About this RNA:
An RNA of 177 nucleotides, treated with DMS and read out base by base. Reactivities are given for positions 27 through 126. The data come from the RNA Mapping Database (RMDB), library OK2TRN. For DMS, 695 sequencing reads were counted.

RNA sequence: GGGAACGACUCGAGUAGAGUCGAAAAAGGAAACUCAUGAUGCCUGCUUUCUGAUAGGGAAACUUUAGUAUCAGUGGUGAGUUGCUAAGUGUAUGAGAGUUAGACAUGUGGCAUCGAACAGAAGCACUGUCACCUCAGCUUUCGAGCUGAGGUGACAAAAAGAAACAACAACAACAAC
Reactivity to DMS in 0.01 (KOAc 150mM, MgCl2 10mM, bicine 150mM(pH8.5), 24C), signal-to-noise 1, nucleotides 027 to 126: a060g000g000a110a070a140c050u000c000a140u010g000a000u000g010c000c010u000g030c030u000u000u020c010u010g030a100u010a060g010g000g020a110a080a040c010u000u030u000a030g010u000a010u000c030a070g080u030g000g010u010g000a040g030u000u020g010c100u010a040a010g020u010g010u020a140u000g000a090g000a120g020u000u000a060g010a040c150a060u010g040u000g000g000c020a070u000c030g010a030a080c210a150g000a080a100g020c040a040c120